[RMDB]
RNA sequence: GGGAACGACUCGAGUAGAGUCGAAAAUCGGACUUGGCGAGAACAUUUCGACCAAAAAUACCAGUGUUUCCUAGAUUCCGGGCCCAUGUACAGCACACAGUUGAGGAGCUCUCGGAACAAAGCCCUCCUACACCCGUCAAUUCGUUGACGGGUGUAGAAAAGAAACAACAACAACAAC
Reactivity to 2A3 in 0.01 (KOAc 150mM, MgCl2 10mM, bicine 150mM(pH8.5), 24C), signal-to-noise 3, nucleotides 027 to 126: u170c000g000g000a010c040u030u050g040g000c070g020a020g080a150a110c070a140u160u220u040c130g070a280c040c040a110a060a000a000a000u280a120c040c020a040g000u000g040u060u030u000c000c000u100a140g000a290u050u040c090c020g030g050g010c010c000c000a050u140g080u050a030c090a070g010c060a030c000a010c050a120g060u100u120g050a100g050g000a130g010c000u000c010u060c060g050g000a020a020c000a030a080a000g030c030c000c000u060c010
Reactivity to DMS in 0.01 (KOAc 150mM, MgCl2 10mM, bicine 150mM(pH8.5), 24C), signal-to-noise 1, nucleotides 027 to 126: u000c000g030g000a120c050u000u000g030g020c090g030a050g020a100a170c120a160u010u010u000c010g010a160c060c000a000a050a060a060a190u060a000c050c000a040g020u010g000u020u000u000c010c030u000a050g020a230u000u000c110c040g000g010g000c090c020c010a070u050g000u010a040c070a110g030c030a090c070a060c080a050g000u020u050g040a040g000g000a140g080c040u000c030u000c010g030g000a020a050c010a060a070a000g000c020c000c000u010c070